[RMDB]
Description:
This 177-nucleotide RNA was probed chemically with 2A3 and DMS. The RNA was probed in 150 mM KOAc, 10 mM MgCl2 and 150 mM bicine (pH 8.5) at 24 C. For DMS, 1,204 sequencing reads were counted. For 2A3, 513 sequencing reads were counted.

RNA sequence: GGGAACGACUCGAGUAGAGUCGAAAAAUAUGUAGACCACUCGCCACUAUUGGCGAGCAGAGAGGACUGGAACGUCGGCUAAGUUUGGCUAUCACCCAGGAAGGCCUAUUGCUGGAACGGCAGAGGAAACGGCGUAACUGUUCGCAGUUACGCCGUUAAAAGAAACAACAACAACAAC
Reactivity to 2A3 in 0.01 (KOAc 150mM, MgCl2 10mM, bicine 150mM(pH8.5), 24C), signal-to-noise 1, nucleotides 027 to 126: a000u260a060u100g050u070a060g000a070c060c000a010c030u000c010g000c010c000a070c070u260a100u300u050g000g000c000g000a000g000c000a000g000a000g000a000g000g000a090c000u060g030g010a200a000c070g000u000c000g000g000c010u070a200a080g090u070u070u050g000g000c000u000a040u300c010a160c000c000c000a000g130g000a010a010g020g010c000c000u140a180u000u050g080c050u150g100g050a020a020c040g170g000c020a000g020a000g070g000a170
Reactivity to DMS in 0.01 (KOAc 150mM, MgCl2 10mM, bicine 150mM(pH8.5), 24C), signal-to-noise 1, nucleotides 027 to 126: a020u040a020u000g000u000a130g000a150c040c030a300c000u000c000g000c000c010a100c300u000a190u000u040g010g000c010g040a020g000c130a010g000a100g000a080g000g000a090c000u040g000g000a240a060c140g060u000c010g000g000c000u030a040a000g010u000u000u000g020g000c010u000a050u010c080a070c280c000c030a010g040g000a220a160g030g000c000c030u020a010u020u000g000c050u000g010g000a040a220c100g020g010c030a040g010a080g000g000a040